[RMDB]
RNA sequence: GGGAACGACUCGAGUAGAGUCGAAAAAAAAAGGAAGUAUCGCCUAAUGGUAGGGCAGCAGCUUGGAAAGCUGUGGGCGCCAACGUCUUGUGGGUUCGAUUCCCUCUACUUCCGCCAAAUAAAAAAAGCAUACGUCAGGAUUCGUCCUGACGUAUGCAAAAGAAACAACAACAACAAC
Reactivity to DMS in 0.01 (KOAc 150mM, MgCl2 10mM, bicine 150mM(pH8.5), 24C), signal-to-noise 1, nucleotides 027 to 126: a040a040a070a110a130g010g000a040a000g000u000a000u000c050g040c030c000u000a040a130u030g020g010u000a030g030g000g000c000a260g030c000a000g000c000u000u000g070g000a080a090a080g030c000u000g010u000g010g000g000c010g000c270c170a020a010c040g010u000c020u000u020g010u000g000g000g000u000u000c030g000a300u000u000c000c000c000u000c010u000a000c000u010u020c000c000g000c020c000a040a120a080u040a030a010a000a030a030a010a030

The record gives the reactivity of an RNA of 177 nucleotides to DMS.